[RMDB]
RNA sequence: GGGAACGACUCGAGUAGAGUCGAAAAGAUGGGUCCGAUGGAUUAAUGCGUCGCCAGCCAUUGGAUCCUGAUUGAUAGAUUGAGGGCGACGGUCGGAUCACUCGGUAAUUCGGUGCUCAACGAGUGAUCCGUGAUGAUAGUUAAGACGAGCACCUAACAUAGCUAUGAUGUUCGCAUCAUAGCUAUGAAAAGAAACAACAACAACAAC
Reactivity to 2A3 in 0.01 (KOAc 150mM, MgCl2 10mM, bicine 150mM(pH8.5), 24C), signal-to-noise 5, nucleotides 027 to 156: g070a040u120g000g000g000u000c000c000g010a000u000g010g030a020u030u210a200a070u230g100c000g000u000c000g010c010c000a010g050c000c000a000u010u000g010g000a000u000c000c000u000g030a010u010u130g050a010u020a130g120a050u030u230g110a090g040g060g000c000g000a010c000g000g000u020c010g010g000a010u000c000a000c000u000c020g050g080u140a130a100u150u160c060g000g000u000g030c000u000c000a010a010c010g000a000g000u000g000a000u000c000c000g000u010g020a010u050g010a020u020a110g140u180u170a130a030g090a040c050g000a010g020c000a010c000c000u000a030a010
Reactivity to DMS in 0.01 (KOAc 150mM, MgCl2 10mM, bicine 150mM(pH8.5), 24C), signal-to-noise 1, nucleotides 027 to 156: g020a080u010g010g010g050u010c000c020g030a020u000g000g000a160u010u000a020a070u000g030c010g000u000c030g010c040c030a300g000c030c010a040u000u010g000g010a040u000c010c000u010g000a110u000u000g040a170u010a110g000a220u000u010g020a210g000g030g030c060g040a060c020g030g000u000c000g010g000a030u000c010a010c010u000c010g010g020u020a080a130u010u000c110g000g020u000g030c020u030c000a100a090c000g000a010g040u000g000a020u000c010c010g010u000g010a060u000g020a200u000a040g040u000u000a110a150g010a120c070g010a150g030c000a030c000c000u000a100a230
Structure probing data (2A3 and DMS) for a 207-nucleotide construct. In probing experiments dimethyl sulfate is read out at A N1 and C N3, which are open when not base-paired. The data come from the RNA Mapping Database (RMDB), library OK3TST. For 2A3 the reverse transcriptase was SuperScript II with manganese.